Source: RMDB library OK2TRN, as collected in RNAgym.
An RNA of 177 nucleotides, treated with DMS and 2A3 and read out base by base.
RNA sequence: GGGAACGACUCGAGUAGAGUCGAAAAGUCGCCGCGUCAACAUCAACGCCCAGCGCGGGCGAGGGACGCGUCCUACGGGGGUGACCCAUUCGCCGGCAUGGAAGAGGACGGCAAGAUUGCCGCGACGAGUGCAGGUAAUAUUCGUAUUACCUGCACUAAAAGAAACAACAACAACAAC
Reactivity to DMS in 0.01 (KOAc 150mM, MgCl2 10mM, bicine 150mM(pH8.5), 24C), signal-to-noise 7, nucleotides 027 to 126: g010u000c020g030c040c050g020c020g010u010c020a100a110c090a110u010c090a130a140c060g010c100c000c010a140g020c170g020c090g000g010g010c010g000a050g000g000g020a070c020g020c010g010u010c000c010u000a100c160g040g010g010g010g020u000g010a100c010c010c020a170u010u000c040g010c010c010g000g000c020a090u010g000g010a120a190g010a130g000g010a050c030g000g000c060a070a070g000a110u000u010g020c020c040g000c010g020a050c080g020
Reactivity to 2A3 in 0.01 (KOAc 150mM, MgCl2 10mM, bicine 150mM(pH8.5), 24C), signal-to-noise 6, nucleotides 027 to 126: g020u020c010g010c040c010g000c010g020u010c040a130a140c020a190u080c030a060a080c030g020c000c020c010a080g100c300g010c100g160g000g000c000g000a030g040g040g000a020c000g010c020g140u070c000c000u030a100c120g070g000g000g000g000u030g030a060c000c000c000a090u060u070c020g000c010c000g070g000c050a050u060g070g050a090a060g050a070g110g030a040c020g000g020c010a020a030g100a110u110u220g000c010c000g010c000g010a020c020g020
For DMS, 9,070 sequencing reads were counted. 2A3 is a SHAPE reagent: it acylates the 2'-hydroxyl of flexible nucleotides of all four kinds. Conditions: 150 mM KOAc, 10 mM MgCl2 and 150 mM bicine (pH 8.5), 24 C. For 2A3, 12,359 sequencing reads were counted.